[RMDB]
RNA sequence: GGGAACGACUCGAGUAGAGUCGAAAAUUUUAGUAGGGCCAUGUGUUCCAAACUUGGGUAAGAUUGUUGGUAUAUCUCCUGACCAAUUUGGUGCUCAUCAUUUUACAAAGCCAUGUGUCAAAAGGGGGUAACUUACUCAUUUCGAUGAGUAAGUUACAAAAGAAACAACAACAACAAC
Reactivity to DMS in 0.01 (KOAc 150mM, MgCl2 10mM, bicine 150mM(pH8.5), 24C), signal-to-noise 4, nucleotides 027 to 126: u010u010u010u000a110g010u000a080g010g010g020c070c090a040u000g000u010g000u000u010c030c020a060a050a080c150u000u000g000g000g010u010a100a050g010a090u000u000g000u000u010g010g010u000a060u000a070u000c030u000c080c070u000g010a160c020c020a030a060u000u000u000g010g000u000g000c060u000c050a030u020c100a080u010u010u000u000a110c150a060a070a100g000c040c040a040u010g020u000g000u000c080a050a040a140a090g010g010g000g010
Reactivity to 2A3 in 0.01 (KOAc 150mM, MgCl2 10mM, bicine 150mM(pH8.5), 24C), signal-to-noise 3, nucleotides 027 to 126: u040u040u050u070a070g030u040a090g040g070g000c040c020a070u050g020u010g000u110u090c030c010a050a050a080c090u030u050g020g030g030u090a080a020g070a290u020u120g030u040u050g050g020u060a110u000a040u130c030u000c000c030u050g060a030c000c010a000a070u080u090u060g000g000u030g010c070u030c020a090u030c030a040u040u110u100u070a100c050a030a030a010g000c000c000a040u070g090u020g030u040c040a080a040a100a100g000g020g000g000